[RMDB]
An RNA of 177 nucleotides, treated with 2A3 and DMS and read out base by base. The RNA was probed in 150 mM KOAc, 10 mM MgCl2 and 150 mM bicine (pH 8.5) at 24 C. The DMS profile rests on 4,131 reads. Reactivities are given for positions 27 through 126. High DMS reactivity at an A or C suggests that its Watson-Crick edge is free. 2A3 adducts were read by reverse transcription with SuperScript II with manganese.

RNA sequence: GGGAACGACUCGAGUAGAGUCGAAAAGAUAUGGAUAUAGCAACAGCUGGAGUAUCGGAAACGAUACCCAGACAUGCUGUCAUCCUAAGUCAAAAGGGAACCCAGUACUUCGGUACUGGGUUCCCAAGCAUAGAAUAAAGUUCGCUUUAUUCUAUGCAAAAGAAACAACAACAACAAC
Reactivity to 2A3 in 0.01 (KOAc 150mM, MgCl2 10mM, bicine 150mM(pH8.5), 24C), signal-to-noise 1, nucleotides 027 to 126: g060a000u060a040u110g010g000a000u020a000u030a030g000c000a010a110c080a150g090c010u010g010g050a300g110u000a000u030c010g010g040a040a070a000c000g020a000u010a000c010c010c020a020g040a030c010a010u030g020c010u020g000u010c070a010u020c000c000u020a060a020g070u010c030a000a060a120a060g000g000g000a020a010c030c030c020a000g000u020a010c030u070u150c300g120g000u000a000c010u020g030g000g000u010u000c020c020c000a020a000
Reactivity to DMS in 0.01 (KOAc 150mM, MgCl2 10mM, bicine 150mM(pH8.5), 24C), signal-to-noise 4, nucleotides 027 to 126: g010a030u000a230u010g000g000a020u000a040u000a000g010c000a010a070c250a150g020c010u000g010g000a170g020u000a010u010c000g000g000a070a060a110c000g010a010u000a000c000c000c000a000g000a120c070a140u000g000c000u000g020u000c150a020u000c000c000u000a050a140g000u000c020a040a090a120a120g000g010g000a010a010c000c000c000a020g000u000a010c000u000u010c240g030g020u000a000c010u000g000g010g000u000u000c000c000c000a000a020